[RMDB]
RNA sequence: GGGAACGACUCGAGUAGAGUCGAAAACGUCCGUUCCUCGCCUAUGAGGGGAAGGGGGUCUUCGUGCUCUGUCGGACGAGCAACCCUUCCGCCGGGCGGUUCCAGGAGCUGGAGGUGGAAGGAGAGCCCGCUACUCUACUUUCGAGUAGAGUAGCGGAAAAGAAACAACAACAACAAC
Reactivity to DMS in 0.01 (KOAc 150mM, MgCl2 10mM, bicine 150mM(pH8.5), 24C), signal-to-noise 1, nucleotides 027 to 126: c040g000u000c000c020g010u000u000c000c000u000c010g000c040c140u000a060u030g020a130g000g060g000g000a020a010g020g010g000g000g000u000c110u000u000c060g030u010g020c020u010c070u000g010u000c100g010g010a020c040g000a050g000c060a110a200c030c000c000u000u000c000c010g000c020c000g000g010g030c020g000g000u000u010c130c170a100g010g000a050g010c020u040g020g010a150g010g030u000g010g000a070a070g000g000a080g010a210g000c120
Reactivity to 2A3 in 0.01 (KOAc 150mM, MgCl2 10mM, bicine 150mM(pH8.5), 24C), signal-to-noise 2, nucleotides 027 to 126: c020g190u020c000c000g040u060u000c020c000u080c000g050c030c040u250a190u300g050a080g040g070g000g000a000a000g040g000g000g010g030u040c050u100u100c080g090u070g080c000u060c000u090g300u210c110g040g040a030c020g000a020g030c000a020a090c000c000c000u000u010c020c000g000c020c000g000g110g030c000g000g000u010u070c060c070a080g120g000a020g060c050u080g020g080a050g050g040u030g040g000a030a030g010g020a080g000a040g010c000
About this RNA
Structure probing data (DMS and 2A3) for a 177-nucleotide construct. Source: RMDB library OK2TST, as collected in RNAgym. Values cover nucleotides 27 to 126. For DMS, 1,379 sequencing reads were counted.